[RMDB]
RNA sequence: GGGAACGACUCGAGUAGAGUCGAAAAGUUUUUGGAUUACAUCAAUAGUCGCAUGAGCAGAAGUAAACCGAACAAGAAUUACUGCGGUAAUUCAAGUUCAAAGUUGACACUAUCGCAAUAAAUAUAAACGCUAUCUUGUAUUCGUACAAGAUAGCGUAAAAGAAACAACAACAACAAC
Reactivity to 2A3 in 0.01 (KOAc 150mM, MgCl2 10mM, bicine 150mM(pH8.5), 24C), signal-to-noise 2, nucleotides 027 to 126: g040u060u050u030u070u120g110g000a050u110u070a070c030a100u100c040a070a140u080a070g070u040c050g010c210a040u060g100a050g000c050a070g010a110a010g030u020a080a060a010c020c010g000a020a000c010a000a030g050a000a040u000u000a000c000u010g010c140g090g010u000a000a000u000u010c010a020a010g000u000u000c000a010a010a000g010u000u020g060a010c010a000c060u080a080u210c010g000c000a010a080u140a110a100a010u260a060u050a080a150
Reactivity to DMS in 0.01 (KOAc 150mM, MgCl2 10mM, bicine 150mM(pH8.5), 24C), signal-to-noise 2, nucleotides 027 to 126: g010u010u000u020u000u000g050g000a080u000u000a020c120a090u010c150a070a130u000a040g010u000c050g000c070a060u000g010a110g040c020a090g010a050a080g020u010a090a020a030c000c210g000a000a000c010a060a300g010a010a030u000u000a000c020u000g060c150g040g010u000a010a000u000u000c000a020a250g000u000u000c050a020a020a090g030u000u000g010a050c150a070c030u000a080u010c010g000c030a100a070u000a070a020a040u020a100u000a120a130